[RMDB]
RNA sequence: GGGAACGACUCGAGUAGAGUCGAAAAAAGCUACGAUUCAGUUGUGCUCGGCGUGAGCCAGCAGACCCCGCAAGACCGCCGCUCUGGUCAGAUGUGGGAACAAGUUAACAUGGUGUCUGACCCGGUAUAACUACAUGAGGUUCGCCUCAUGUAGUUAAAAAGAAACAACAACAACAAC
Reactivity to DMS in 0.01 (KOAc 150mM, MgCl2 10mM, bicine 150mM(pH8.5), 24C), signal-to-noise 5, nucleotides 027 to 126: a090a040g010c040u000a070c080g010a100u010u000c060a120g010u000u000g020u010g010c010u000c100g040g000c050g000u020g010a200g020c010c010a030g010c010a110g010a110c080c020c010c030g010c050a050a110g010a070c070c030g010c080c070g000c190u000c110u000g010g000u000c020a060g010a110u000g010u000g010g010g010a060a060c100a070a090g010u000u000a070a050c100a090u010g010g010u010g000u000c010u000g000a140c020c010c050g000g000u010a100
Reactivity to 2A3 in 0.01 (KOAc 150mM, MgCl2 10mM, bicine 150mM(pH8.5), 24C), signal-to-noise 2, nucleotides 027 to 126: a020a010g110c090u120a100c100g090a150u090u150c060a010g050u050u020g210u130g070c000u020c020g040g020c040g110u130g060a020g000c000c000a020g000c010a010g030a060c000c010c000c000g000c020a030a010g050a040c000c030g020c010c030g070c080u070c100u100g000g010u000c000a010g040a170u080g040u040g000g040g020a020a040c060a130a010g050u120u080a040a020c010a080u100g070g030u040g040u020c030u020g040a040c000c020c000g000g030u140a100
An RNA of 177 nucleotides, treated with DMS and 2A3 and read out base by base. For 2A3 the reverse transcriptase was SuperScript II with manganese. The reactions ran in a buffer of 150 mM KOAc, 10 mM MgCl2 and 150 mM bicine (pH 8.5), at 24 C. It was measured as part of the RMDB library OK2TRN. For DMS, 5,465 sequencing reads were counted.